[RMDB]
RNA sequence: GGGAACGACUCGAGUAGAGUCGAAAAUCAACGUUUUUCAACUUAUGAAAUGCUUGAUUUUCAUUAAAAAUGAUAUGGUUUCCUGCCACAAAUCCCUGUCAAGAUGAUGCUUGACGGGGAUUUAUUUUCAAGGUUCACAUUUCGAUGUGAACCUUGAAAAAGAAACAACAACAACAAC
Reactivity to 2A3 in 0.01 (KOAc 150mM, MgCl2 10mM, bicine 150mM(pH8.5), 24C), signal-to-noise 1, nucleotides 027 to 126: u000c000a000a050c080g000u000u000u000u000u000c070a120a070c060u220u270a170u300g000a000a000a000u030g000c030u010u000g010a010u010u020u000u000c000a000u000u230a060a060a030a000a000u300g020a070u100a030u080g010g000u000u060u030c000c040u060g020c010c000a130c060a150a040a010u000c040c000c000u020g010u000c000a000a000g010a010u300g030a040u190g200c000u000u000g000a000c000g000g000g020g020a000u000u000u000a000u000u000u000
Notes
This 177-nucleotide RNA was probed chemically with 2A3. Reactivities are given for positions 27 through 126.